Structure probing data (2A3 and DMS) for a 177-nucleotide construct.
The RNA was probed in 150 mM KOAc, 10 mM MgCl2 and 150 mM bicine (pH 8.5) at 24 C.
Values cover nucleotides 27 to 126.
DMS adducts were read by reverse transcription with MarathonRT.
RNA sequence: GGGAACGACUCGAGUAGAGUCGAAAAUACGGCUAAUGUUUAUUAGUCAAGUUUCCAUGAGCUCACUCUUUAUUCUUUUUCUCGUUUUCUUAUACCUAGUAUUUUUUCUGACGCUUUUUGAAGUGACCGUUUACUAUGUGUUCGCACAUAGUAAACGAAAAGAAACAACAACAACAAC
Reactivity to 2A3 in 0.01 (KOAc 150mM, MgCl2 10mM, bicine 150mM(pH8.5), 24C), signal-to-noise 3, nucleotides 027 to 126: u080a030c050g010g000c010u020a010a020u010g050u230u300u300a020u020u000a010g010u000c040a040a020g030u010u050u000c030c000a030u060g060a030g020c030u020c000a020c010u010c000u030u090u110a090u130u050c020u010u070u020u050u010c020u000c040g000u020u070u080u030c040u090u150a140u050a180c010c060u020a080g090u070a300u070u120u020u010u010u060c060u080g030a020c010g030c000u020u110u070u080u290g130a050a020g000u000g030a010c020
Reactivity to DMS in 0.01 (KOAc 150mM, MgCl2 10mM, bicine 150mM(pH8.5), 24C), signal-to-noise 1, nucleotides 027 to 126: u020a140c250g000g000c000u010a000a000u000g030u010u000u040a010u010u000a010g020u000c000a120a240g010u000u000u000c000c000a110u000g020a080g000c040u020c040a030c040u000c060u000u010u010a070u030u010c010u000u000u020u000u010c020u000c060g010u000u000u000u000c070u010u000a110u010a080c050c050u000a080g000u000a000u000u020u020u010u000u000c090u020g030a100c040g000c020u000u000u000u000u000g000a050a080g020u000g000a090c190